[RMDB]
RNA sequence: GGGAACGACUCGAGUAGAGUCGAAAAGAUAUGGAGUUGGUCGGGAGCGAUUGGAUCGGAAACGAUCCAAAUCGCGACGAUCGACGCAACUCCUAAGUCAAAACCCUAAACGUUCGCGUUUAGGGAACCCAAGACUAAUGUUCGCAUUAGUCUUGGGAAAAGAAACAACAACAACAAC
Reactivity to 2A3 in 0.01 (KOAc 150mM, MgCl2 10mM, bicine 150mM(pH8.5), 24C), signal-to-noise 1, nucleotides 027 to 126: g000a000u020a000u060g010g000a000g020u010u010g010g000u010c020g000g000g010a020g000c010g000a010u020u000g000g000a010u000c010g000g010a010a000a000c000g000a000u020c000c000a000a010a010u020c000g000c010g010a030c010g000a000u010c000g000a000c000g030c000a000a000c010u000c000c000u000a000a010g000u000c010a020a090a160a300c020c000c000u000a000a000a010c000g050u070u120c300g010c000g150u000u000u010a000g010g000g000a010a020
Reactivity to DMS in 0.01 (KOAc 150mM, MgCl2 10mM, bicine 150mM(pH8.5), 24C), signal-to-noise 2, nucleotides 027 to 126: g000a010u000a020u010g000g000a030g050u000u010g000g010u000c010g010g010g000a010g030c000g010a000u010u000g000g000a000u000c000g050g000a010a010a030c000g020a010u000c000c000a010a000a030u000c000g030c000g010a030c300g000a010u010c000g000a000c000g020c030a010a010c010u000c000c000u000a000a090g000u010c010a130a080a120a180c000c000c000u000a000a010a010c010g020u010u020c290g030c010g010u000u000u000a000g000g010g000a000a010
The record gives the reactivity of an RNA of 177 nucleotides to 2A3 and DMS. For DMS, 4,137 sequencing reads were counted. High 2A3 reactivity points to a flexible backbone, as in loops and unpaired stretches. The RNA was probed in 150 mM KOAc, 10 mM MgCl2 and 150 mM bicine (pH 8.5) at 24 C. DMS adducts were read by reverse transcription with MarathonRT. Source: RMDB library TTRDES, as collected in RNAgym.